Chemical mapping of a 177-nucleotide RNA with 2A3 and DMS. Reactivities are given for positions 27 through 126. The DMS profile rests on 677 reads. It was measured as part of the RMDB library M2PK50.

RNA sequence: GGGAACGACUCGAGUAGAGUCGAAAAUCUUUGGCUUUCGAGCCAAAGAGUGGGUGCAAUGUCCUUUAAGCACCAAACACGGAAAAACCGAGAAAGGACAAAAAAAUCACAGUUUCGACUGUGAUAAGAUGGCUAUUCAUUUCGAUGAAUAGCCAUCAAAAGAAACAACAACAACAAC
Reactivity to 2A3 in 0.01 (KOAc 150mM, MgCl2 10mM, bicine 150mM(pH8.5), 24C), signal-to-noise 1, nucleotides 027 to 126: u000c000u000u000u000g000g000c000u020u120u180c250g090a020g010c010c030a000a000a000g000a020g000u070g080g010g040u010g000c040a040a070u090g010u000c000c010u010u030u020a050a030g000c030a010c020c000a020a050a030c090a000c030g020g010a150a050a000a040a030c010c000g000a040g110a060a020a010g000g020a000c020a030a050a030a020a000a000a020u000c000a000c010a000g010u010u050u120c180g070a020c000u010g000u000g010a000u010a010a000
Reactivity to DMS in 0.01 (KOAc 150mM, MgCl2 10mM, bicine 150mM(pH8.5), 24C), signal-to-noise 1, nucleotides 027 to 126: u000c000u000u000u000g010g010c000u000u000u020c160g030a000g020c010c000a000a000a000g000a030g020u000g030g020g010u000g060c000a160a160u010g000u000c000c000u000u000u000a120a300g000c010a020c000c010a080a090a140c120a110c090g010g010a070a070a020a230a080c000c040g000a300g020a030a020a000g000g000a010c000a000a000a030a120a040a140a030u000c000a000c000a000g010u000u000u000c120g010a010c010u000g000u020g010a000u020a040a130